[RMDB]
RNA sequence: GGGAACGACUCGAGUAGAGUCGAAAAGAGAUCGCGGCUGGGGCUUAGGACCCCACUCCCGCGAGACAGGAGUAAUCCUAAACAGGGUUUUCACCCUUCCUUUAGUUUCCUUCCUCUCCUGGAGAGGCAUACCUUUUUACUUCGGUAAAAAGGUAUGAAAAGAAACAACAACAACAAC
Reactivity to DMS in 0.01 (KOAc 150mM, MgCl2 10mM, bicine 150mM(pH8.5), 24C), signal-to-noise 4, nucleotides 027 to 126: g020a170g000a090u000c000g020c010g020g030c250u000g020g010g010g030c020u010u010a140g020g000a250c000c000c000c000a000c070u010c290c000c000g030c010g000a010g010a070c180a030g000g000a010g000u010a110a080u000c030c000u000a050a060a080c180a020g000g010g000u000u010u010u010c170a080c010c000c000u000u010c020c000u000u000u000a110g010u000u000u000c010c020u000u010c000c010u010c000u010c000c160u000g010g000a000g010a030g010g010
Reactivity to 2A3 in 0.01 (KOAc 150mM, MgCl2 10mM, bicine 150mM(pH8.5), 24C), signal-to-noise 3, nucleotides 027 to 126: g060a020g000a040u010c000g010c000g010g000c020u020g030g010g000g020c050u130u200a110g130g180a290c010c000c000c000a000c010u020c010c000c000g000c000g000a010g000a000c040a000g000g020a000g010u120a070a060u020c020c010u020a030a030a030c200a040g010g030g000u080u090u230u300c120a060c000c010c000u040u020c000c000u070u100u050a030g020u010u070u010c010c000u070u100c080c000u000c000u010c040c180u180g060g080a030g000a000g010g020

This 177-nucleotide RNA was probed chemically with DMS and 2A3.
Source: RMDB library VIROID, as collected in RNAgym.
Conditions: 150 mM KOAc, 10 mM MgCl2 and 150 mM bicine (pH 8.5), 24 C.
The DMS profile rests on 3,680 reads.
For 2A3 the reverse transcriptase was SuperScript II with manganese.
For DMS the reverse transcriptase was MarathonRT.
The 2A3 profile rests on 4,985 reads.